[RMDB]
Chemical mapping of a 177-nucleotide RNA with 2A3 and DMS. The data come from the RNA Mapping Database (RMDB), library TTRDES. For 2A3 the reverse transcriptase was SuperScript II with manganese.
RNA sequence: GGGAACGACUCGAGUAGAGUCGAAAAGAUAUGGAAGGACACAGGACAUGCUAUAUCGUCGGAAACGACGAUUUAGCAACAGCCUGGUCCUUCCUAAGUCAAACAUCACUGGGUUCGCCCAGUGAUGGCACGGUGUAUUCUUCGGAAUACACCGUGCAAAAGAAACAACAACAACAAC
Reactivity to 2A3 in 0.01 (KOAc 150mM, MgCl2 10mM, bicine 150mM(pH8.5), 24C), signal-to-noise 1, nucleotides 027 to 126: g000a000u010a010u050g000g020a030a010g030g000a040c080a000c000a300g020g030a000c080a240u300g000c000u010a000u010a000u040c020g000u000c000g010g060a040a030a000c000g020a000c010g020a030u000u000u010a000g000c010a050a060c040a010g010c010c000u000g010g000u000c000c000u000u000c000c000u000a000a000g000u000c010a010a050a140c000a000u030c000a010c000u030g000g090g000u090u160c300g180c010c020c020a000g000u000g000a010u000g020
Reactivity to DMS in 0.01 (KOAc 150mM, MgCl2 10mM, bicine 150mM(pH8.5), 24C), signal-to-noise 1, nucleotides 027 to 126: g020a010u010a150u010g000g000a040a000g010g010a000c010a030c020a000g020g000a010c120a190u020g020c020u000a000u000a000u010c000g020u010c010g000g000a020a000a070c010g030a020c000g020a000u000u000u000a000g050c000a090a050c280a180g000c000c000u000g000g000u000c000c000u010u000c000c000u010a000a030g010u010c000a130a150a300c020a010u000c000a020c000u000g000g000g010u000u010c300g020c010c000c000a010g030u000g000a000u010g000